Source: RMDB library M2RFPK, as collected in RNAgym. An RNA of 207 nucleotides, treated with 2A3 and DMS and read out base by base. DMS (dimethyl sulfate) methylates the pairing face of unpaired adenines and cytosines.
RNA sequence: GGGAACGACUCGAGUAGAGUCGAAAAGUCUGUGCGUUUCCAUUUGAGUAUCCUGAAAACGGGCUUUUCAGCAUGGAACGUACAUAUUAAAUAGUAGGAGUGCAUAGUGGCCCGUAUAGCAGGCAGUGAGGCGAGGAUUGUUUCGACAAUCCUCGAAGUAUCAAAGUGGUUUCGACCACUUUGAUACAAAAGAAACAACAACAACAAC
Reactivity to 2A3 in 0.01 (KOAc 150mM, MgCl2 10mM, bicine 150mM(pH8.5), 24C), signal-to-noise 4, nucleotides 027 to 156: g060u040c060u040g040u030g030c020g000u000u120u030c010c010a030u080u070u050g040a050g030u090a110u110c010c010u020g050a050a030a030a060c090g000g030g000c000u100u100u050u060c040a030g020c020a020u020g020g010a050a010c000g020u000a000c000a000u030a010u010u160a030a080a070u110a010g070u040a030g030g070a060g040u060g030c040a050u060a120g080u080g050g000c000c030c000g000u020a020u040a060g020c030a010g020g000c020a020g020u030g070a030g040g050c020g000a000g000g000a000u000u020g030u010u070u040c060g060a010c000a000a010u000c000c000u000c000g000a010a010
Reactivity to DMS in 0.01 (KOAc 150mM, MgCl2 10mM, bicine 150mM(pH8.5), 24C), signal-to-noise 2, nucleotides 027 to 156: g020u000c070u010g000u010g000c010g010u000u000u000c010c000a120u000u030u000g010a150g010u000a030u010c050c030u010g000a010a060a040a170c050g000g020g030c050u010u000u000u000c040a130g010c110a050u020g000g020a060a030c050g010u000a050c020a030u000a080u010u020a070a060a130u000a110g010u000a060g010g010a120g010u000g050c020a130u000a120g000u000g010g010c020c010c000g020u000a100u010a100g000c000a070g000g020c040a130g010u000g000a130g010g000c030g010a020g020g010a030u000u000g010u000u000u010c280g020a120c000a010a020u000c010c000u000c000g000a000a060